[RMDB]
Conditions: 150 mM KOAc, 10 mM MgCl2 and 150 mM bicine (pH 8.5), 24 C. An RNA of 177 nucleotides, treated with DMS and read out base by base.
RNA sequence: GGGAACGACUCGAGUAGAGUCGAAAAGAUAUGGACGGAUGGAGGCUAUAAUCUACGUCGGAAACGACGUAGGUAGCCUUCCAUUCCGUCCUAAGUCAAAAGCUAAGCCGCUUCGGCGGCUUAGCAAGAAGCUUUAAAGGUUCGCCUUUAAAGCUUCAAAAGAAACAACAACAACAAC
Reactivity to DMS in 0.01 (KOAc 150mM, MgCl2 10mM, bicine 150mM(pH8.5), 24C), signal-to-noise 2, nucleotides 027 to 126: g000a050u000a300u010g010g010a000c000g000g010a040u000g010g020a080g000g010c000u000a070u000a300a110u020c010u000a000c000g000u000c000g010g000a180a110a250c000g020a030c000g020u000a000g000g030u000a000g000c000c010u020u010c000c020a000u000u010c000c000g020u000c000c000u000a010a080g000u010c070a090a140a150a160g020c000u000a010a030g040c000c000g040c010u000u000c210g030g060c000g030g000c020u000u000a010g010c000a030a080
The DMS profile rests on 2,194 reads.